[RMDB]
RNA sequence: GGGAACGACUCGAGUAGAGUCGAAAAUGGCGACGUCGUAGAUGAUCGGCAGAAUGGUGUAAACCACAUGACCCGUACCGCAAAGAAUGGUCAGUGUACAGGUCACAAACGGCGCGACAAUUGAGAACGUGACUAAAUGCUUCGGCAUUUAGUCACGAAAAGAAACAACAACAACAAC
Reactivity to 2A3 in 0.01 (KOAc 150mM, MgCl2 10mM, bicine 150mM(pH8.5), 24C), signal-to-noise 2, nucleotides 027 to 126: u080g010g020c010g030a300c010g060u010c000g000u000a030g020a230u010g000a000u000c030g000g000c010a050g150a140a060u120g010g060u080g020u160a180a180a020c030c000a020c020a090u060g020a000c020c030c000g010u120a080c030c020g020c130a190a020a030g110a040a110u080g020g000u030c020a030g010u030g010u100a080c040a040g010g000u020c000a000c000a000a170a000c030g010g020c000g000c040g000a010c010a120a180u080u200g050a090g060a110a020
Reactivity to DMS in 0.01 (KOAc 150mM, MgCl2 10mM, bicine 150mM(pH8.5), 24C), signal-to-noise 2, nucleotides 027 to 126: u000g020g000c020g020a130c040g050u000c010g030u000a200g000a120u000g000a000u000c030g000g000c070a000g000a180a190u000g000g000u000g020u000a020a060a020c010c000a090c220a110u010g000a040c010c030c190g050u000a150c100c020g000c210a120a120a110g010a070a120u010g000g000u010c010a060g000u020g070u000a020c020a080g010g020u000c010a020c110a010a120a010c030g010g000c000g030c000g000a000c080a030a080u000u000g000a160g000a160a120
Conditions: 150 mM KOAc, 10 mM MgCl2 and 150 mM bicine (pH 8.5), 24 C. Structure probing data (2A3 and DMS) for a 177-nucleotide construct. Reactivities are given for positions 27 through 126. The 2A3 profile rests on 1,467 reads. High DMS reactivity at an A or C suggests that its Watson-Crick edge is free.